[RMDB]
RNA sequence: GGGAACGACUCGAGUAGAGUCGAAAAAUGCUCCGGAUCCAUUAUCCACAGCCUCAAUGACGAACAAGACAUCCGAAAAAUAGGCGGACUGUAUAAAGCAAUACCAUUCACAACAACAGCACUAAUUAUUGGAAGCCUGGCAUUAACAGGAAUGCCUUCUCGAUUGGAAGUUCGCUUCCAAUCGAGAAAAAGAAACAACAACAACAAC
Reactivity to 2A3 in 0.01 (KOAc 150mM, MgCl2 10mM, bicine 150mM(pH8.5), 24C), signal-to-noise 1, nucleotides 027 to 156: a020u010g000c020u020c000c000g010g010a020u010c000c000a050u060u130a000u020c020c020a030c050a090g000c000c000u070c070a090a070u170g020a040c070g020a040a050c030a050a070g110a010c000a000u000c010c000g040a080a080a010a050a030u050a020g030g040c020g060g000a040c050u040g030u010a100u000a080a190a000g020c020a060a010u000a180c010c010a030u080u110c020a020c010a120a070c020a030a040c020a000g060c000a000c090u120a100a070u250u040a070u130u110g010g050a040a000g020c070c050u000g000g010c000a020u010u010a110a040c040a030g030g110a070a000u060g000c000c000u020